[RMDB]
RNA sequence: GGGAACGACUCGAGUAGAGUCGAAAAUGCGCAAGGUCGAGGAGAACCUGCACUACCUCUUCAGGCACGGGUUCGUGCGCCAGGCCUGCAAGAUCUCCAACGUGGAGCUGACCAACCUGGUCUCCUACAUGGGCAUCUUGCACGAGAACCGCCUGGGCGCACAUUUGUAGUUCGCUACAAAUGUGCGAAAAGAAACAACAACAACAAC
Reactivity to 2A3 in 0.01 (KOAc 150mM, MgCl2 10mM, bicine 150mM(pH8.5), 24C), signal-to-noise 3, nucleotides 027 to 156: u160g010c030g010c110a060a070g000g030u030c020g050a040g110g080a090g070a030a040c000c010u030g000c010a030c020u100a070c010c000u030c030u110u140c100a090g080g020c030a010c080g120g060g070u290u270c030g010u010g030c020g020c030c020a020g030g000c000c010u020g020c000a000a000g000a020u000c020u030c010c020a100a140c080g010u000g000g030a080g020c150u090g060a020c010c000a100a150c090c150u120g000g000u030c000u000c000c000u030a050c010a060u060g000g000g010c010a000u000c000u010u020g050c000a010c050g090a100g040a080a050c030c040g000c000c000u000g020g000g000
Reactivity to DMS in 0.01 (KOAc 150mM, MgCl2 10mM, bicine 150mM(pH8.5), 24C), signal-to-noise 1, nucleotides 027 to 156: u000g030c010g010c020a110a030g040g010u000c030g020a180g040g000a300g030a040a120c000c040u030g010c080a030c000u000a070c040c070u000c080u020u010c050a060g030g030c020a000c030g030g010g000u000u000c060g000u000g040c030g040c020c020a030g020g020c000c100u000g010c000a030a050g040a050u000c050u000c010c000a040a150c050g020u020g020g000a050g020c040u000g000a010c040c000a090a180c230c110u010g000g050u000c000u000c040c000u000a040c000a050u000g020g040g030c300a070u000c020u040u000g000c000a010c050g000a150g020a090a090c050c030g000c000c000u000g000g000g000

The record gives the reactivity of an RNA of 207 nucleotides to 2A3 and DMS.
Reactivities are rounded to 0.1 and cut off at 0 and 3.
The RNA was probed in 150 mM KOAc, 10 mM MgCl2 and 150 mM bicine (pH 8.5) at 24 C.
For 2A3, 2,289 sequencing reads were counted.
2A3 adducts were read by reverse transcription with SuperScript II with manganese.
DMS adducts were read by reverse transcription with MarathonRT.
It was measured as part of the RMDB library OK3TST.